[RMDB]
Chemical mapping of a 177-nucleotide RNA with DMS. For DMS the reverse transcriptase was MarathonRT. Conditions: 150 mM KOAc, 10 mM MgCl2 and 150 mM bicine (pH 8.5), 24 C. It was measured as part of the RMDB library 15KREP. Reactivities are given for positions 27 through 126.

RNA sequence: GGGAACGACUCGAGUAGAGUCGAAAAAUUUCCUCGGGAGGAUCCCCCAAGCUUCCAACAGGCAAGCAACAAGAUAGAGGAGCCCCCAUGACGCUGGAACCGUCCCGGAAGUGGGAGAAAGGGAGGCGAUAGUACUAUGGUUCGCCAUAGUACUAUCAAAAGAAACAACAACAACAAC
Reactivity to DMS in 0.01 (KOAc 150mM, MgCl2 10mM, bicine 150mM(pH8.5), 24C), signal-to-noise 1, nucleotides 027 to 126: a110u030u000u000c010c000u000c070g000g030g000a130g020g010a110u020c030c020c030c020c060a070a150g000c020u000u000c010c020a150a100c210a180g010g010c100a010a050g020c030a110a110c110a050a020g000a110u000a080g000a060g020g000a100g020c090c010c000c030c010a110u030g000a120c050g030c020u000g000g000a060a090c060c080g030u010c030c030c000g000g000a090a090g010u020g000g010g010a090g000a020a080a080g010g000g020a090g000g000c140